[RMDB]
RNA sequence: GGGAACGACUCGAGUAGAGUCGAAAAUCCGACGAGCUGAACGCUUUCGAAGGAAAGCUUGACCAGCUAAUCUUCUGCAUCGCCAUUACGAGGACUGCCCUUAGAGGCUCAUGGCGAUAGGUCACCCAAAACUAUUUGAGGUUCGCCUCAAAUAGAAGAAACUCCCCUAGUUCGCUAGGGGAGUUUCAAAAGAAACAACAACAACAAC
Reactivity to 2A3 in 0.01 (KOAc 150mM, MgCl2 10mM, bicine 150mM(pH8.5), 24C), signal-to-noise 1, nucleotides 027 to 156: u040c020c000g030a030c030g000a030g000c000u020g000a140a040c050g000c040u000u060u030c060g120a180a100g120g000a030a010a000g000c000u110u070g080a020c000c100a000g030c000u050a060a080u010c110u070u030c050u120g080c060a050u000c000g020c000c000a030u130u110a130c170g040a100g150g080a140c140u120g000c000c020c000u100u050a100g030a140g140g000c000u020c000a000u020g000g000c010g010a020u040a020g000g040u070c070a100c020c030c020a040a180a030a040c000u000a000u000u000u000g000a000g020g020u030u100c190g070c050c000u030c000a000a000a000u000a010g000a060a020
Record summary:
The record gives the reactivity of an RNA of 207 nucleotides to 2A3. The reactions ran in a buffer of 150 mM KOAc, 10 mM MgCl2 and 150 mM bicine (pH 8.5), at 24 C. Values cover nucleotides 27 to 156. It was measured as part of the RMDB library M2RFPK.